[RMDB]
RNA sequence: GGGAACGACUCGAGUAGAGUCGAAAAGUAAUACCAGUUACUCAGGAGGCUGAGGCAGGAGAAUCGCUUGAAACCGGGAGGCAGAGGUUGCAGUGUUCGCGCCACUGCACUACAGCGUGGGCGACAGCAUUACGUGUGCAUUCGUGCACACGUAAUGAAAAGAAACAACAACAACAAC
Reactivity to DMS in 0.01 (KOAc 150mM, MgCl2 10mM, bicine 150mM(pH8.5), 24C), signal-to-noise 7, nucleotides 027 to 126: g010u010a040a070u010a160c090c080a100g000u010u000a060c020u000c090a090g000g000a110g000g010c050u000g000a060g000g010c050a050g010g010a070g000a060a060u000c080g010c040u000u000g010a050a070a090c090c030g000g010g000a050g010g000c050a050g000a050g010g010u000u000g030c040a050g000u000g010u000u000c060g010c050g020c140c010a020c010u020g030c020a050c130u000a100c150a070g010c040g020u000g000g000g000c020g010a050c110a080g000
Reactivity to 2A3 in 0.01 (KOAc 150mM, MgCl2 10mM, bicine 150mM(pH8.5), 24C), signal-to-noise 3, nucleotides 027 to 126: g040u040a020a060u050a160c030c020a000g040u040u060a030c020u020c070a050g040g040a040g090g050c030u030g030a040g040g000c030a030g010g060a040g050a090a080u100c060g030c070u040u060g040a090a030a020c040c020g030g000g000a030g030g000c030a020g010a020g090g000u070u080g010c000a030g020u010g050u130u070c020g010c000g060c040c000a020c020u090g020c020a010c040u110a040c040a010g000c020g020u040g000g030g000c020g020a010c030a010g060